[RMDB]
RNA sequence: GGGAACGACUCGAGUAGAGUCGAAAAUGUCCAGUCCCUCCCCGUUCCUGGAGAAGGGAGACUCGGGAACGCCUAGCAUCUGAGGGACGAAGCCGCCCCCGGGCGCUCCCCUCGGAGGUCCACUGGGACUAAAUCUCCUAUUCGUAGGAGAUUUAGUAAAAGAAACAACAACAACAAC
Reactivity to 2A3 in 0.01 (KOAc 150mM, MgCl2 10mM, bicine 150mM(pH8.5), 24C), signal-to-noise 2, nucleotides 027 to 126: u080g050u010c010c010a030g070u010c020c000c000u010c020c000c010c000g010u010u000c000c010u060g210g010a050g030a090a090g090g060g030a050g080a010c010u010c010g010g010g000a020a010c000g000c010c020u060a030g020c020a090u000c030u040g020a040g000g030g000a020c020g020a020a000g050c090c040g040c030c000c000c030c020g040g010g000c030g020c010u000c000c030c020c000u000c000g000g010a000g000g000u030c030c010a050c030u030g020g000g010
Reactivity to DMS in 0.01 (KOAc 150mM, MgCl2 10mM, bicine 150mM(pH8.5), 24C), signal-to-noise 5, nucleotides 027 to 126: u010g000u020c020c020a110g010u000c010c010c010u000c010c050c030c020g010u010u000c010c010u010g010g010a040g010a140a090g020g010g010a080g000a100c020u000c010g010g000g000a030a030c060g000c070c060u000a120g010c080a110u000c040u010g000a020g010g010g010a140c090g010a060a240g020c070c060g020c040c020c010c100c180g010g010g020c020g010c030u000c030c000c010c000u000c010g020g000a020g010g010u000c070c160a120c040u000g010g010g000